An RNA of 207 nucleotides, treated with DMS and 2A3 and read out base by base.
[RMDB]
RNA sequence: GGGAACGACUCGAGUAGAGUCGAAAAGACAGAGUUUCUCUCUCUGUCAGUCAGGCUGGAGUGCAGUGGUGUGAUCUCAGCUCACUGCAACCUCCGUUUCCUGGGUUCAAGUGAUCCUCCUGCCUCUACCCUCCCAAGUAGCUGGGAUUACAGGAGAAUUUAUCGCUCAUUUCGAUGAGCGAUAAAUAAAAGAAACAACAACAACAAC
Reactivity to DMS in 0.01 (KOAc 150mM, MgCl2 10mM, bicine 150mM(pH8.5), 24C), signal-to-noise 2, nucleotides 027 to 156: g000a030c000a020g030a060g010u000u000u010c120u000c130u010c030u000c010u000g000u020c000a080g000u000c060a040g020g010c170u020g000g020a070g080u000g010c030a020g020u000g030g090u000g030u000g000a090u000c130u010c090a230g010c000u000c020a010c000u000g020c000a010a040c110c000u000c000c010g000u000u000u000c010c020u000g010g000g000u010u000c040a060a160g020u010g010a090u000c010c000u000c030c000u000g000c000c020u010c030u010a130c030c020c000u000c020c010c020a100a180g060u000a080g030c050u000g010g020g000a140u000u000a080c010a070g000g020a120g010a110
Reactivity to 2A3 in 0.01 (KOAc 150mM, MgCl2 10mM, bicine 150mM(pH8.5), 24C), signal-to-noise 2, nucleotides 027 to 156: g020a010c000a010g020a000g000u000u300u000c100u020c020u000c010u000c010u060g000u010c010a010g100u060c000a020g040g000c000u120g000g000a030g010u030g000c010a010g000u000g080g000u040g030u070g270a300u040c080u040c120a010g050c010u050c010a010c000u000g000c020a030a110c020c030u000c010c000g000u020u140u040c010c000u020g030g030g000u090u120c110a150a080g030u050g060a050u060c010c010u000c000c010u020g050c000c010u000c010u010a030c000c000c020u040c020c000c000a010a000g010u000a010g010c120u110g000g020g010a070u080u090a040c020a040g020g050a020g010a000

DMS adducts were read by reverse transcription with MarathonRT. Reactivities are given for positions 27 through 156. The DMS profile rests on 3,376 reads. It was measured as part of the RMDB library OK3TST.